[RMDB]
RNA sequence: GGGAACGACUCGAGUAGAGUCGAAAACAAAGAUUACCGUUUCUUCCACAGCACCUGGUUGGAUUUGACGGUGUAAGCCCAGGGAACUGUAAUGCAUGAACAAGCUAGGGAUAGAGAUUGAGUUCUCACACCCAUAUCCGUUCGCGGAUAUGGGUGUAAAAGAAACAACAACAACAAC
Reactivity to 2A3 in 0.01 (KOAc 150mM, MgCl2 10mM, bicine 150mM(pH8.5), 24C), signal-to-noise 1, nucleotides 027 to 126: c010a020a030a000g070a160u010u060a020c000c000g000u010u000u040c010u030u000c010c000a010c020a050g050c110a180c130c070u150g050g050u150u120g050g000a010u000u040u000g020a000c010g040g000u020g020u040a000a000g020c000c000c070a000g020g010g020a030a040c030u050g050u260a090a040u080g010c000a000u040g040a160a020c020a090a000g080c020u080a010g020g010g080a020u090a040g110a000g020a020u000u110g070a090g210u020u000c010u000c000
Reactivity to DMS in 0.01 (KOAc 150mM, MgCl2 10mM, bicine 150mM(pH8.5), 24C), signal-to-noise 2, nucleotides 027 to 126: c080a090a080a040g000a300u000u000a000c050c050g000u010u000u000c010u000u010c000c030a050c120a130g030c200a140c170c140u030g040g000u030u000g080g000a040u000u000u010g000a010c000g000g030u000g010u000a040a090g010c080c010c000a130g010g000g010a050a010c040u000g020u000a090a070u000g010c040a130u010g010a060a080c150a080a030g000c040u000a040g020g000g010a120u030a050g000a050g000a060u010u020g010a110g020u000u000c000u010c030